RNA sequence: GGGAACGACUCGAGUAGAGUCGAAAAACGGUCAUACUACGGUAUGACCGACCGCGCUUGAUGAAUAUGCGUUAUGGCGCUUAUUCCUAUGCACAUCAUUUGGUCGAAGUAGCUGUGCGUUUUGCAGCUCCAAGCGCUAUCAAGAAACGGCGUGGUAUUCAACUACGUGCGUCAAUGCGCAGUUUGAUAAGCGUCGAUGCUACGGGCAAUCGCUUAUCCGAUGUUUACACCUUCGAACUGACCACGUAUAGGCUACGGCCUAUACGACCGUUAACUUCGGUUAACGGAAAAGAAACAACAACAACAAC
Reactivity to DMS in 0.01 (KOAc 150mM, MgCl2 10mM, bicine 150mM(pH8.5), 24C), signal-to-noise 9, nucleotides 027 to 266: a220c010g000g000u000c000a000u000a000c000u000a100c160g030g000u000a000u000g000a010c000c000g000a020c030c020g020c070g020c010u010u000g010a120u010g000a040a020u000a020u000g010c010g030u000u010a100u020g020g010c020g020c000u000u000a030u000u000c030c170u010a050u010g020c020a130c300a090u010c110a110u010u000u000g020g010u000c010g010a070a070g010u000a090g010c030u000g010u000g010c070g010u000u010u010u000g010c100a040g000c090u000c150c080a040a060g010c010g000c010u010a060u010c140a110a130g000a100a140a060c050g000g000c000g010u000g000g010u000a090u020u020c300a100a040c030u000a010c000g010u000g000c010g020u000c070a050a050u010g000c030g020c010a100g010u000u000u010g000a010u000a010a020g010c000g010u000c070g000a150u000g000c020u010a080c220g020g010g010c020a030a070u000c010g000c000u000u000a010u000c010c100g000a040u000g000u010u010u020a110c200a110c270c020u000u000c030g000a070a070c100u010g010a050c120c070a160c020g010u000a010u000a000g000g010c000u000a100c180g030g010c000c000u000a010u000a010c010g010a060
Reactivity to 2A3 in 0.01 (KOAc 150mM, MgCl2 10mM, bicine 150mM(pH8.5), 24C), signal-to-noise 9, nucleotides 027 to 266: a000c010g000g000u000c000a000u000a000c000u010a020c210g100g000u010a000u010g000a000c000c000g010a010c000c010g030c010g010c020u100u090g030a080u090g020a100a050u100a040u120g020c050g040u160u140a230u270g240g010c010g000c010u010u020a030u040u010c000c010u080a120u170g070c060a060c020a160u210c040a090u120u090u190g040g010u030c020g040a110a020g020u080a010g020c010u010g020u040g060c050g070u040u040u160u220g040c020a020g010c020u050c050c030a060a020g000c000g000c010u040a070u180c080a100a080g080a140a100a010c020g010g000c000g010u010g000g010u050a170u130u220c030a040a030c010u020a000c010g050u070g300c010g030u050c050a040a060u100g000c010g000c010a030g020u040u050u070g010a010u000a000a010g000c000g020u020c050g050a020u010g000c010u050a140c200g140g160g000c010a010a010u010c010g000c010u000u000a000u000c010c040g040a030u050g050u070u120u080a100c110a070c040c030u050u070c040g050a100a070c050u110g050a060c040c020a080c050g000u000a000u000a010g000g000c000u030a030c270g110g000c000c000u000a000u000a000c000g010a010